[RMDB]
RNA sequence: GGGAACGACUCGAGUAGAGUCGAAAAAGGUUUUUAGCAAUGUUAAUCUUCAUGGAUUAAGCAAAAAUUUCGUAGGUGAUUUCUUACAACUGCUUCUCUAGACAUUGCUUUUUGUGAAAUCAUCAUACCUAUACCAGGCUUUCGAGCCUGGUAUAGGAAAAGAAACAACAACAACAAC
Reactivity to DMS in 0.01 (KOAc 150mM, MgCl2 10mM, bicine 150mM(pH8.5), 24C), signal-to-noise 2, nucleotides 027 to 126: a080g030g000u010u010u030u010u050a010g000c010a030a000u000g000u000u000a040a020u000c040u010u040c260a250u060g000g020a030u000u020a030a010g010c050a000a040a060a050a150u000u020u030c100g000u000a030g040g010u000g030a050u010u000u000c000u010u030a040c100a030a050c220u010g000c010u000u000c260u030c000u030a070g000a020c000a000u000u000g020c020u010u000u030u040u010g010u050g010a040a030a020u000c010a000u020c020a140u020a140
Reactivity to 2A3 in 0.01 (KOAc 150mM, MgCl2 10mM, bicine 150mM(pH8.5), 24C), signal-to-noise 6, nucleotides 027 to 126: a000g210g030u150u080u060u060u050a020g000c000a010a030u030g010u020u060a060a050u040c040u240u190c190a160u300g020g010a040u030u050a060a010g000c020a000a050a050a130a120u080u170u190c150g100u190a110g000g010u010g020a050u020u060u020c010u070u170a110c020a110a080c110u060g010c010u050u010c070u040c030u070a030g010a060c010a010u020u000g000c000u040u050u010u030u060g130u010g000a030a020a020u000c000a000u010c000a020u060a140